Structure probing data (DMS and 2A3) for a 207-nucleotide construct.
For DMS the reverse transcriptase was MarathonRT.
Values cover nucleotides 27 to 156.
For 2A3, 4,049 sequencing reads were counted.
The DMS profile rests on 3,310 reads.
RNA sequence: GGGAACGACUCGAGUAGAGUCGAAAACGAGGGGUGGGCGAAAGUUGCCAUGAGACCGUAACUUUCGUAGUCAUUGAUAAAGGGACAGGUCUCGCUCUUUUGUCAUUGCGGUUGCCUAGAGGCAUGGAAAACCAUGACAGGUUCGCCUGUCAUGGAACCUAAGGAAAUUGUUCGCAAUUUCCUUAGGAAAAGAAACAACAACAACAAC
Reactivity to DMS in 0.01 (KOAc 150mM, MgCl2 10mM, bicine 150mM(pH8.5), 24C), signal-to-noise 2, nucleotides 027 to 156: c080g020a240g000g000g000g030u000g010g020g020c040g010a020a020a030g020u000u000g020c020c020a140u010g000a040g020a040c030c040g010u000a070a090c010u000u000u000c010g000u000a190g000u000c090a130u000u000g010a150u000a030a030a080g010g010g000a260c070a060g030g000u030c040u000c030g030c110u010c040u000u010u000u010g020u030c030a140u000u000g010c030g010g060u000u000g010c010c040u000a110g000a160g040g010c010a080u000g040g000a050a020a090a150c000c000a020u000g000a030c010a050g020g020u000u000c300g020c010c000u010g010u000c000a000u000g010g000a010a030
Reactivity to 2A3 in 0.01 (KOAc 150mM, MgCl2 10mM, bicine 150mM(pH8.5), 24C), signal-to-noise 5, nucleotides 027 to 156: c100g020a120g020g030g020g170u290g020g010g010c020g010a010a000a000g000u010u010g010c040c050a110u130g040a010g010a020c000c000g010u000a000a010c000u020u010u000c020g010u010a020g050u040c070a110u030u240g100a080u120a100a060a040g020g000g020a030c040a050g020g020u000c000u000c010g010c020u040c000u040u120u080u050g080u050c020a060u020u120g040c020g060g020u070u060g020c000c010u060a090g050a170g040g020c030a030u080g030g030a050a040a030a000c000c010a000u010g000a000c000a000g000g040u010u030c130g070c070c000u000g000u000c000a000u000g000g000a000a010